Structure probing data (DMS and 2A3) for a 177-nucleotide construct. DMS adducts were read by reverse transcription with MarathonRT. It was measured as part of the RMDB library M2PK90. The RNA was probed in 150 mM KOAc, 10 mM MgCl2 and 150 mM bicine (pH 8.5) at 24 C.
RNA sequence: GGGAACGACUCGAGUAGAGUCGAAAAAAAAUGAGUGCGUGGUAGCACAUACCAGACCAAUCUUCGGCACAUGGUCGCACAAGUACAGCUUCGCCUGUACAAAGCGAACAACAACAACAACAAGCAAGCUUCUUUUAAUCUUCGGAUUAAAAGAAGCAAAAGAAACAACAACAACAAC
Reactivity to DMS in 0.01 (KOAc 150mM, MgCl2 10mM, bicine 150mM(pH8.5), 24C), signal-to-noise 2, nucleotides 027 to 126: a050a070a040a060u010g000a130g020u010g000c010g030u000g000g000u000a060g020c130a090c110a090u000a050c020c010a050g000a130c040c000a080a060u020c090u000u000c090g030g040c010a050c090a090u000g020g010u000c020g010c040a050c160a090a130g010u000a000c000a020g020c020u030u010c250g000c130c000u010g020u000a000c010a050a100a130g010c010g020a010a060c010a000a080c020a010a020c030a000a030c020a000a020c140a130a140g020c200a120a100
Reactivity to 2A3 in 0.01 (KOAc 150mM, MgCl2 10mM, bicine 150mM(pH8.5), 24C), signal-to-noise 1, nucleotides 027 to 126: a000a000a000a000u170g010a010g000u010g010c030g010u090g080g020u020a010g010c050a020c010a160u050a040c020c000a010g040a030c000c000a020a070u020c050u170u100c070g130g000c040a030c020a080u040g120g010u000c020g030c000a070c000a120a140g000u000a010c000a020g000c020u170u110c120g040c010c000u000g000u030a010c000a050a000a020g000c020g050a020a030c000a000a010c020a010a000c000a000a000c000a000a020c020a020a010g080c020a050a050